[RMDB]
This 177-nucleotide RNA was probed chemically with 2A3.
RNA sequence: GGGAACGACUCGAGUAGAGUCGAAAAGGAGGUGAUGACGACGAACUGCGCCUGCCUUUAAAGGCCGUCUCGCUCGAUCGUCUCAAAGAGGUGCUGAAGGCUGUGCGUGGACGCUUCGUGGGGCGCGCGGCGCGGGACGAUUCGUCGUCCCGCGCCGAAAAGAAACAACAACAACAAC
Reactivity to 2A3 in 0.01 (KOAc 150mM, MgCl2 10mM, bicine 150mM(pH8.5), 24C), signal-to-noise 2, nucleotides 027 to 126: g010g000a010g010g040u110g050a230u160g080a010c180g000a000c030g040a050a120c110u110g000c020g020c010c010u110g000c000c000u040u190u180a200a180a080g020g010c030c020g040u010c100u000c020g090c000u000c000g030a040u050c020g000u000c000u000c000a030a100a000g010a000g130g010u060g000c030u060g000a060a010g150g000c100u060g000u030g130c030g000u100g000g020a020c020g020c010u040u040c060g010u070g000g000g010g100c010g010c000g000

For 2A3, 692 sequencing reads were counted. 2A3 adducts were read by reverse transcription with SuperScript II with manganese.